Conditions: 150 mM KOAc, 10 mM MgCl2 and 150 mM bicine (pH 8.5), 24 C. The record gives the reactivity of an RNA of 177 nucleotides to DMS and 2A3. It was measured as part of the RMDB library OK2TRN. For DMS the reverse transcriptase was MarathonRT.
RNA sequence: GGGAACGACUCGAGUAGAGUCGAAAAGGAAAUCUCUGGGGACAGUGAGUCUAUUGCAGGGUAGGGCAGAGUCUAGGGCUGGUGGUCUCAGGCACUAGGGGGGCAAAAACAUCUUGGAGGAGGAGACCUCCGACAUUACUUUCGAGUAAUGUCGGAGAAAAGAAACAACAACAACAAC
Reactivity to DMS in 0.01 (KOAc 150mM, MgCl2 10mM, bicine 150mM(pH8.5), 24C), signal-to-noise 2, nucleotides 027 to 126: g000g000a060a150a090u010c050u010c030u000g020g000g020g030a130c100a060g020u000g010a120g020u010c060u000a090u000u000g010c110a090g020g010g010u000a110g020g010g020c070a100g020a100g020u000c030u010a070g010g020g010c030u000g000g020u000g030g010u000c030u000c020a140g000g020c040a060c050u000a080g020g040g000g020g030g000c150a000a030a070a040a060c110a040u000c080u010u010g000g000a080g010g000a080g030g000a090g010a050c130
Reactivity to 2A3 in 0.01 (KOAc 150mM, MgCl2 10mM, bicine 150mM(pH8.5), 24C), signal-to-noise 1, nucleotides 027 to 126: g030g020a040a000a050u000c000u000c050u080g040g010g030g000a020c020a090g030u070g180a080g000u050c020u060a180u040u110g040c010a030g000g010g030u090a060g030g000g000c010a020g000a010g110u030c050u110a020g010g060g070c010u010g000g090u050g030g020u020c010u030c000a030g000g030c000a000c070u060a060g000g000g010g040g000g000c030a060a040a000a000a000c000a030u030c000u010u060g060g020a050g000g010a040g020g000a020g020a000c010